[RMDB]
RNA sequence: GGGAACGACUCGAGUAGAGUCGAAAACUCGCUGUUUUUGUGGCUGGCUUUCAGCGGGCUGGAGGAGCCGGGAGCGGCGGCGGAGGACCGAGCCAAAAACGUCAGCCGAGGCCGGGCGGCCCCGCUCAAAAUCUUCGUAUCUUCGGAUACGAAGAAACCAUUUCAUAAUCUUCGGAUUAUGAAAUGGAAAAGAAACAACAACAACAAC
Reactivity to 2A3 in 0.01 (KOAc 150mM, MgCl2 10mM, bicine 150mM(pH8.5), 24C), signal-to-noise 1, nucleotides 027 to 156: c020u030c020g000c030u040g040u030u050u020u080u080g060u030g030g000c020u020g030g000c000u020u110u100c060a030g010c040g020g030g000c030u040g030g060a100g020g020a020g060c020c060g020g030g000a050g020c020g030g010c040g020g030c030g000g080a080g070g000a020c000c070g020a040g000c020c000a060a050a050a010a060c030g020u020c020a020g000c000c010g010a020g000g000c000c010g040g030g050c040g020g010c000c020c010c000g000c000u020c020a060a100a030a040u010c000u000u000c000g000u000a000u000c010u060u000c230g100g000a000u010a000c000g010a010a000g000a000a000a000
The record gives the reactivity of an RNA of 207 nucleotides to 2A3. Conditions: 150 mM KOAc, 10 mM MgCl2 and 150 mM bicine (pH 8.5), 24 C. Values cover nucleotides 27 to 156. For 2A3, 1,112 sequencing reads were counted.